This 177-nucleotide RNA was probed chemically with 2A3. The RNA was probed in 150 mM KOAc, 10 mM MgCl2 and 150 mM bicine (pH 8.5) at 24 C.
[RMDB]
RNA sequence: GGGAACGACUCGAGUAGAGUCGAAAAUAGCUCUCCUCCCGCGCCCGUAGCUCGGCGUGGAAGAAACGAGAGAGCGCUUCGUAGUAGAGCCCGAGGCCGUCGCGGGUGGCCGGAAGCGUCGGGAAGGCCAUCGGCGGUUGUUCGCAACCGCCGAUGGAAAAGAAACAACAACAACAAC
Reactivity to 2A3 in 0.01 (KOAc 150mM, MgCl2 10mM, bicine 150mM(pH8.5), 24C), signal-to-noise 1, nucleotides 027 to 126: u100a000g010c010u010c000u000c000c000u010c010c010c000g000c000g000c000c080c000g100u250a060g060c120u120c100g020g000c000g000u080g010g000a080a010g000a030a150a010c120g050a120g000a000g000a000g200c000g000c030u120u030c020g060u050a180g030u020a050g040a000g020c010c030c010g000a000g030g030c110c040g030u000c010g000c060g030g100g060u090g000g080c060c000g010g030a140a030g010c020g050u120c020g060g020g000a030a000g050g010
The 2A3 profile rests on 624 reads. Values cover nucleotides 27 to 126.